[RMDB]
Conditions: 150 mM KOAc, 10 mM MgCl2 and 150 mM bicine (pH 8.5), 24 C.
The record gives the reactivity of an RNA of 177 nucleotides to 2A3 and DMS.

RNA sequence: GGGAACGACUCGAGUAGAGUCGAAAAUGAUUGCUGAGUGUUCACCUGGACCUUCUGACUACCUUCCCUGUGCUAUUCCAUCAGCCUACAGACCUGGUACCUGGAUUUUUGCCCGAGAUGAUUCCUAGUAUUAAAUCGUGUUCGCACGAUUUAAUACAAAAGAAACAACAACAACAAC
Reactivity to 2A3 in 0.01 (KOAc 150mM, MgCl2 10mM, bicine 150mM(pH8.5), 24C), signal-to-noise 2, nucleotides 027 to 126: u140g020a060u070u090g020c000u020g030a060g050u060g080u070u050c040a050c060c030u030g010g060a050c010c020u050u080c050u050g070a070c030u080a090c010c030u020u020c010c000c000u030g000u020g010c010u080a090u120u020c000c000a030u010c040a060g060c000c010u040a060c050a050g060a100c010c000u010g030g010u020a040c040c010u010g080g000a050u000u060u010u050u140g050c020c010c010g030a060g010a020u060g030a050u020u000c020c000u010a040
Reactivity to DMS in 0.01 (KOAc 150mM, MgCl2 10mM, bicine 150mM(pH8.5), 24C), signal-to-noise 6, nucleotides 027 to 126: u010g010a090u000u000g000c030u000g000a100g030u010g010u010u000c050a100c070c040u000g010g000a100c060c030u000u000c040u010g010a120c060u000a090c060c030u000u000c030c030c020u000g000u000g000c040u010a110u010u000c040c040a060u010c070a060g000c030c020u000a060c080a080g010a110c070c030u010g010g010u010a050c040c030u000g000g000a050u000u000u000u010u000g010c020c000c020g010a070g010a070u000g000a170u000u000c000c000u000a250

For DMS the reverse transcriptase was MarathonRT.
Reactivities are given for positions 27 through 126.
The DMS profile rests on 7,895 reads.
It was measured as part of the RMDB library RFMREP.